[RMDB]
RNA sequence: GGGAACGACUCGAGUAGAGUCGAAAAUGCGCCGCGAUGCCACAAUGUCCGCGUCCAAGUCAUCCAUCGAGUCCAACGCUGUGGAUGAUGAGGUAUUUCCACCGAUCACAGCGGGAUCAUUGUCGAACGCCGAUCAUUAUUUCGAUAAUGAUCGGCGAAAAGAAACAACAACAACAAC
Reactivity to 2A3 in 0.01 (KOAc 150mM, MgCl2 10mM, bicine 150mM(pH8.5), 24C), signal-to-noise 3, nucleotides 027 to 126: u060g000c010g000c000c000g060c030g060a030u090g000c000c030a030c030a120a080u180g050u040c000c020g030c010g080u000c000c010a010a000g010u000c000a000u000c000c000a010u060c100g090a010g050u060c110c050a150a020c080g050c050u010g000u000g000g020a010u010g030a030u060g000a080g020g050u040a120u030u040u000c020c080a070c010c040g050a030u090c050a010c010a070g000c000g000g000g000a010u110c040a090u050u130g030u020c030g000a090a010
Reactivity to DMS in 0.01 (KOAc 150mM, MgCl2 10mM, bicine 150mM(pH8.5), 24C), signal-to-noise 2, nucleotides 027 to 126: u000g000c120g020c110c010g000c050g040a050u040g070c020c030a010c070a020a000u000g070u000c060c030g010c010g000u040c000c010a170a150g030u000c000a010u010c000c010a020u000c090g000a080g060u000c030c070a030a150c090g070c060u050g010u000g000g010a000u010g000a020u000g000a250g020g020u000a140u050u000u020c200c050a070c030c070g000a180u020c240a070c110a070g000c080g000g010g000a070u000c070a170u000u000g000u000c000g030a080a180
Structure probing data (2A3 and DMS) for a 177-nucleotide construct. Values are in units of 0.01, from 0 to 300, in steps of 10. Conditions: 150 mM KOAc, 10 mM MgCl2 and 150 mM bicine (pH 8.5), 24 C. The 2A3 profile rests on 1,489 reads.